[RMDB]
RNA sequence: GGGAACGACUCGAGUAGAGUCGAAAAUCAUUUGUACUACUUCGUGAAGGAAAUUUUGCCUGGACAGUAUGACAUCUCUUUCAUCUCUACACCUGGAUUUCUACAUAGCGCGGUGCAGACAGUCGCCGAAUUGAUCACCAUUCGUGGUGAUCAAUUCAAAAGAAACAACAACAACAAC
Reactivity to 2A3 in 0.01 (KOAc 150mM, MgCl2 10mM, bicine 150mM(pH8.5), 24C), signal-to-noise 2, nucleotides 027 to 126: u060c000a000u010u000u140g050u030a050c010u030a020c000u040u070c040g080u050g080a070a030g090g060a050a100a130u160u130u110u180g050c000c010u020g020g030a020c000a060g060u060a040u100g000a020c010a070u010c060u000c000u080u060u010c030a060u020c020u000c000u060a030c030a040c040c030u010g000g050a090u000u130u000c030u060a130c010a100u130a060g040c050g000c010g060g030u050g030c020a040g070a140c020a050g030u040c020g010c020c040
Reactivity to DMS in 0.01 (KOAc 150mM, MgCl2 10mM, bicine 150mM(pH8.5), 24C), signal-to-noise 3, nucleotides 027 to 126: u000c080a090u010u000u010g010u000a120c070u000a100c060u010u000c100g020u010g010a130a090g000g000a090a110a150u010u010u000u010g020c030c000u000g010g010a070c070a070g010u010a050u000g010a060c110a040u000c040u010c050u010u000u000c020a110u000c050u000c020u000a040c100a060c060c020u000g000g000a080u000u010u000c020u000a040c090a100u000a120g020c070g010c040g010g000u010g010c070a070g000a040c130a070g020u000c070g020c060c100

This 177-nucleotide RNA was probed chemically with 2A3 and DMS.
DMS adducts were read by reverse transcription with MarathonRT.
The reactions ran in a buffer of 150 mM KOAc, 10 mM MgCl2 and 150 mM bicine (pH 8.5), at 24 C.
For 2A3 the reverse transcriptase was SuperScript II with manganese.
In probing experiments dimethyl sulfate is read out at A N1 and C N3, which are open when not base-paired.